Annotation
The record gives the reactivity of an RNA of 177 nucleotides to 2A3 and DMS. High 2A3 reactivity points to a flexible backbone, as in loops and unpaired stretches. It was measured as part of the RMDB library TTRDES. 2A3 adducts were read by reverse transcription with SuperScript II with manganese. For DMS, 1,988 sequencing reads were counted. The reactions ran in a buffer of 150 mM KOAc, 10 mM MgCl2 and 150 mM bicine (pH 8.5), at 24 C. DMS adducts were read by reverse transcription with MarathonRT.
RNA sequence: GGGAACGACUCGAGUAGAGUCGAAAAGAUAUGGACCACAGAGGCGAUAAGCUGAUGGUCGGAAACGACCAUUAGCUUUUGACGCCUCCUGUGGUCCUAAGUCAAAAUCCAUAGUUCGCUAUGGAAACGUAGGAACAACGUUCGCGUUGUUCCUACGAAAAGAAACAACAACAACAAC
Reactivity to 2A3 in 0.01 (KOAc 150mM, MgCl2 10mM, bicine 150mM(pH8.5), 24C), signal-to-noise 1, nucleotides 027 to 126: g010a010u050a030u140g000g000a000c000c000a020c010a020g000a000g020g040c050g100a120u050a300a040g000c020u030g000a010u020g000g000u000c000g000g000a100a110a000c020g030a000c000c000a020u000u000a000g030c020u050u000u010u030g060a040c060g020c010c010u010c000c020u020g000u000g000g010u000c000c000u000a000a000g000u000c000a010a000a010a070u000c010c010a000u010a000g040u030u090c300g000c170u010a020u040g000g000a060a070a090
Reactivity to DMS in 0.01 (KOAc 150mM, MgCl2 10mM, bicine 150mM(pH8.5), 24C), signal-to-noise 2, nucleotides 027 to 126: g000a020u020a300u000g000g000a020c010c000a020c000a040g020a010g020g020c020g000a130u030a010a020g010c010u010g000a020u000g000g010u000c000g030g010a040a020a150c000g000a020c000c000a010u000u000a010g010c000u000u030u000u000g010a180c130g010c000c000u000c130c020u000g040u000g000g000u000c000c000u010a010a050g000u000c040a070a070a210a120u010c000c000a030u000a010g020u010u050c270g020c000u000a000u000g000g010a020a080a100